[RMDB]
RNA sequence: GGGAACGACUCGAGUAGAGUCGAAAAACUCACCUAUACGUAGGUGAGAAUCAAUGCGAUGAUGCAGGAGAUUGCGUCCUGGACGGUAACUUCUGCGGAGUAUGUCCGGUCAUCGGGCGGCUGGGAAUCCAUGACUCGGGUUCGCCCGAGUCAUGGAAAAAGAAACAACAACAACAAC
Reactivity to 2A3 in 0.01 (KOAc 150mM, MgCl2 10mM, bicine 150mM(pH8.5), 24C), signal-to-noise 1, nucleotides 027 to 126: a000c000u000c000a000c000c000u000a000u030a120c300g030u020a020g010g000u000g000a000g040a000a010u090c010a150a000u010g060c000g160a260u030g000a000u020g020c000a000g080g040a000g000a040u000u300g190c000g000u120c100c270u260g060g040a000c050g000g190u090a130a000c030u080u030c000u060g000c000g020g000a000g000u090a010u040g050u000c010c000g010g060u150c000a150u110c000g000g000g030c000g000g010c000u020g010g010g010a000a070
Structure probing data (2A3) for a 177-nucleotide construct. It was measured as part of the RMDB library RFM100. The 2A3 profile rests on 449 reads.